The record gives the reactivity of an RNA of 177 nucleotides to DMS and 2A3.
For DMS the reverse transcriptase was MarathonRT.

[RMDB]
RNA sequence: GGGAACGACUCGAGUAGAGUCGAAAAGGGACGAGUUGCAAAGGAACCGUGAGAACGGUUUAGGUGCAGCUGAAUGGCGUGCACCUAGAACUUCGGGAAGAAAUGAGUUCCGAACAGUACGCCAGGACUAGUUCGUAGUAUUCGUACUAUGGACUAGAAAAGAAACAACAACAACAAC
Reactivity to DMS in 0.01 (KOAc 150mM, MgCl2 10mM, bicine 150mM(pH8.5), 24C), signal-to-noise 9, nucleotides 027 to 126: g000g010g010a090c110g010a080g010u000u000g010c040a030a070a100g010g000a020a020c000c000g010u000g000a240g000a160a030c020g000g000u000u000u000a030g010g010u000g000c000a080g000c010u000g010a120a100u010g010g010c000g020u000g010c010a070c030c020u000a020g000a050a070c090u000u000c060g010g000g010a090a090g000a080a100a110u010g000a110g010u000u000c000c020g000a050a040c120a140g010u000a020c040g010c010c010a060g000g000a220
Reactivity to 2A3 in 0.01 (KOAc 150mM, MgCl2 10mM, bicine 150mM(pH8.5), 24C), signal-to-noise 9, nucleotides 027 to 126: g050g010g030a020c040g010a030g030u030u030g030c030a030a030a050g090g010a020a010c000c000g010u020g020a070g010a030a010c010g010g000u000u010u010a020g000g020u000g000c000a000g000c010u030g070a080a100u150g010g000c030g020u030g000c000a020c000c000u010a030g020a040a020c010u040u030c020g020g020g030a040a040g060a040a160a070u200g030a070g050u020u000c000c000g000a020a010c020a010g010u030a010c010g000c010c010a020g020g040a020

As a SHAPE reagent, 2A3 marks flexible, mostly unpaired nucleotides at the ribose 2'-OH. Conditions: 150 mM KOAc, 10 mM MgCl2 and 150 mM bicine (pH 8.5), 24 C. For 2A3 the reverse transcriptase was SuperScript II with manganese.